[RMDB]
RNA sequence: GGGAACGACUCGAGUAGAGUCGAAAACCACCAAUUUCAGUUGAACCAACCUCGAUAAAGACUAUUGCUGCUGAAGAAUCUUCUGAACCGACUUCAUCUGUUGACGUGGCACCAACUCCGGUAGAAGACGUCAACGUGAAUUUAGAGUCGAUCAGCAACUCCUUUUACGAUUCGUCGUAAAAGGAGUAAAAGAAACAACAACAACAAC
Reactivity to 2A3 in 0.01 (KOAc 150mM, MgCl2 10mM, bicine 150mM(pH8.5), 24C), signal-to-noise 3, nucleotides 027 to 156: c020c010a030c020c040a070a110u010u040u090c050a050g020u030u040g150a120a080c040c020a050a070c020c040u030c050g040a130u190a170a180a040g060a050c100u110a140u130u160g040c000u020g010c020u020g010a040a010g060a100a150u030c050u110u020c010u110g020a090a040c120c000g000a000c010u060u030c100a040u000c040u040g000u000u000g000a000c000g000u010g040g120c050a020c040c010a090a210c140u120c200c060g040g000u030a050g030a170a010g130a020c000g000u000c000a000a000c000g050u000g030a060a150u140u180u150a040g000a000g020u000c000g000a030u030c000a010g030c010a020
Reactivity to DMS in 0.01 (KOAc 150mM, MgCl2 10mM, bicine 150mM(pH8.5), 24C), signal-to-noise 2, nucleotides 027 to 156: c010c070a300c090c030a130a090u010u000u020c050a080g020u010u010g000a090a080c070c040a080a170c050c030u040c090g010a110u000a100a070a190g010a140c020u000a070u000u000g010c040u020g010c010u000g010a050a300g010a000a250u000c010u000u000c000u000g010a110a060c070c020g030a040c010u010u000c020a100u000c020u000g010u000u000g000a000c000g030u000g010g010c050a140c090c040a080a160c100u000c100c060g010g000u010a070g030a090a160g000a060c030g010u000c010a010a060c000g010u000g000a040a110u000u000u000a160g040a100g020u000c000g010a030u000c030a070g000c210a110

The record gives the reactivity of an RNA of 207 nucleotides to 2A3 and DMS. For DMS the reverse transcriptase was MarathonRT. Values are in units of 0.01, from 0 to 300, in steps of 10.